This 177-nucleotide RNA was probed chemically with DMS. The reactions ran in a buffer of 150 mM KOAc, 10 mM MgCl2 and 150 mM bicine (pH 8.5), at 24 C. For DMS, 1,346 sequencing reads were counted.
RNA sequence: GGGAACGACUCGAGUAGAGUCGAAAAAGAGUACGGCCGCAAGGUUUCCGGUUGUGGAUGGCAGCGUGUGUGUGGCCCCGUCGUCUAGUGCUGGUUCUAGGGCUGGGGCGUCAGCAUCCAGGUAAAAUCGAUGUAUGCGAUUCGUCGCAUACAUCGAAAAAGAAACAACAACAACAAC
Reactivity to DMS in 0.01 (KOAc 150mM, MgCl2 10mM, bicine 150mM(pH8.5), 24C), signal-to-noise 1, nucleotides 027 to 126: a030g010a110g010u010a060c090g030g020c010c030g010c110a050a100g010g010u000u010u010c050c020g020g000u020u000g010u010g000g000a060u000g000g010c020a120g010c070g020u010g010u000g030u010g020u000g010g040c010c000c000c000g010u000c030g020u020c010u010a030g000u020g010c020u010g010g000u000u010c040u010a080g010g010g000c030u010g040g010g010g020c010g030u000c030a070g020c030a070u000c020c030a090g020g030u010a050a040a050a100